[RMDB]
RNA sequence: GGGAACGACUCGAGUAGAGUCGAAAAGACAAGUGCUUCGGCACUUGUCAAAUAAGCAAGUAGAAAUGGCCAUACUACAUGCAUCGAAAGAAAGGCCAUAAAAAACUGUCCAGUUCGCUGGACAGAACAAACAAGUGAUCUUCGGAUCACUUGUUUGAAAAGAAACAACAACAACAAC
Reactivity to 2A3 in 0.01 (KOAc 150mM, MgCl2 10mM, bicine 150mM(pH8.5), 24C), signal-to-noise 2, nucleotides 027 to 126: g000a000c000a010a000g010u010g000c010u040u090c240g110g000c000a020c010u020u000g000u000c000a000a010a000u020a010a000g040c000a100a000g020u010a000g040a000a090a030u030g000g000c020c000a030u030a070c000u010a020c000a030u040g000c020a130u150c170g120a150a130a050g120a110a120a030g060g020c040c010a000u080a000a020a000a000a000a010c000u000g010u000c010c000a010g030u050u100c140g070c090u010g000g020a000c000a000g000a000a020
Reactivity to DMS in 0.01 (KOAc 150mM, MgCl2 10mM, bicine 150mM(pH8.5), 24C), signal-to-noise 2, nucleotides 027 to 126: g020a020c000a010a010g020u000g010c010u000u030c240g030g020c000a000c000u000u000g000u010c000a000a170a070u000a040a050g010c000a020a060g010u000a000g010a060a050a000u010g020g000c020c000a290u030a100c000u020a000c010a130u000g020c010a170u010c100g000a120a130a150g010a070a060a150g030g010c000c010a110u020a000a070a130a070a030a060c000u010g000u010c000c020a000g000u000u030c240g020c000u000g010g000a020c000a000g000a100a090